[RMDB]
RNA sequence: GGGAACGACUCGAGUAGAGUCGAAAAAGGAUGCAUUCGAGUUUACUACUGGAAGCGUAACGACUCGUGACGAUGUUGAGGCAGUUCUGACUGAGGAGGUAGAUUUCUGUAUUCACCUGGCAGCCGAGAUUGAUGUUCAAGAAAGUCUCGAUGAUCCUGUUCGUAUUGUGUUCGCACAAUACGAACAAAAAGAAACAACAACAACAAC
Reactivity to 2A3 in 0.01 (KOAc 150mM, MgCl2 10mM, bicine 150mM(pH8.5), 24C), signal-to-noise 3, nucleotides 027 to 156: a000g090g000a030u100g050c020a050u060u140c010g040a020g060u050u070u070a070c070u020a030c020u020g070g050a100a020g060c030g080u060a080a050c060g050a020c010u000c020g060u120g020a030c050g050a070u100g030u070u050g020a030g020g040c030a040g000u050u050c030u040g090a060c040u040g010a030g060g040a010g000g080u070a030g000a060u080u130u040c040u020g020u010a150u010u070c020a040c040c030u010g050g000c030a020g030c030c020g020a020g000a000u040u050g030a040u090g060u060u090c020a040a020g040a050a070a000g030u010c000u010c020g010a020u030g030a030u070c000c050
Reactivity to DMS in 0.01 (KOAc 150mM, MgCl2 10mM, bicine 150mM(pH8.5), 24C), signal-to-noise 2, nucleotides 027 to 156: a080g000g010a030u000g040c050a230u000u000c040g020a100g020u000u000u000a090c100u090a120c020u010g010g010a060a100g000c090g030u000a100a110c090g020a110c020u000c050g020u000g030a090c020g040a130u010g000u000u000g000a060g000g000c010a040g010u000u000c040u010g020a080c020u000g030a130g050g000a040g040g020u000a100g010a170u000u000u000c090u000g000u000a090u000u010c040a070c030c000u000g010g010c050a080g030c000c040g000a040g030a090u000u000g010a120u000g000u000u000c080a150a080g000a110a150a180g000u010c010u000c000g000a130u010g000a130u000c030c020